RNA sequence: GGGAACGACUCGAGUAGAGUCGAAAAGUUCCAUCCUUUCUUACCUGAUGGCCGGCAUGGUCCCAGCCUCCCCGGUGGCGCCGGCUGGGCAACAUUCCGAAGGGGACCGUCCCUCGGUAAUGGCGAACUGACACUGGAAGUUCGCUUCCAGUGUCAGAAAAGAAACAACAACAACAAC
Reactivity to 2A3 in 0.01 (KOAc 150mM, MgCl2 10mM, bicine 150mM(pH8.5), 24C), signal-to-noise 2, nucleotides 027 to 126: g030u060u040c020c000a020u120c050c010u020u140u090c030u050u070a080c010c020u110g120a140u110g140g000c000c030g020g040c040a090u120g110g040u080c010c000c000a040g010c010c010u060c040c000c000c030g120g010u060g040g010c040g050c050c020g040g000c020u010g000g000g000c010a070a020c000a060u080u010c000c020g050a150a080g010g000g090g010a060c040c020g190u170c000c000c000u000c010g010g000u110a040a030u040g070g010c030g010a050a050
Reactivity to DMS in 0.01 (KOAc 150mM, MgCl2 10mM, bicine 150mM(pH8.5), 24C), signal-to-noise 3, nucleotides 027 to 126: g020u000u000c000c010a120u020c060c060u000u010u000c040u000u000a140c040c040u000g010a100u000g000g020c070c000g000g000c110a130u010g010g010u010c020c000c010a140g000c030c020u000c050c020c020c050g020g020u000g000g020c110g010c030c040g050g000c020u000g000g000g000c070a100a090c040a050u010u000c010c020g010a070a110g020g020g010g000a160c210c270g010u000c010c010c010u010c000g000g000u020a030a030u000g000g010c090g010a060a170